The record gives the reactivity of an RNA of 177 nucleotides to 2A3.
RNA sequence: GGGAACGACUCGAGUAGAGUCGAAAAGCGCGUAGGUUCAGAUGAUGGGCCCGCAUCUGUACGAAAGACAGACGAAAGUCCAGCCUACGUGCAUGAGCACGCGGGCCCCGUGCUCUACCGCAAAAGACGAGUCCCUAGUGUUCGCACUAGGGACUCGAAAAGAAACAACAACAACAAC
Reactivity to 2A3 in 0.01 (KOAc 150mM, MgCl2 10mM, bicine 150mM(pH8.5), 24C), signal-to-noise 1, nucleotides 027 to 126: g000c000g000c040g000u000a000g010g020u050u090c070a030g020a060u000g000a010u020g020g000g000c000c000c000g010c010a000u000c010u020g130u090a070c080g150a180a140a010g090a030c030a000g050a000c090g140a210a020a010g000u000c010c020a020g020c000c000u000a000c000g000u000g020c000a000u020g000a000g020c000a000c040g000c010g010g000g030c020c000c000c000g010u030g020c020u000c000u020a000c010c000g170c080a140a000a000a000g130a060
The 2A3 profile rests on 756 reads. It was measured as part of the RMDB library OK1LIB.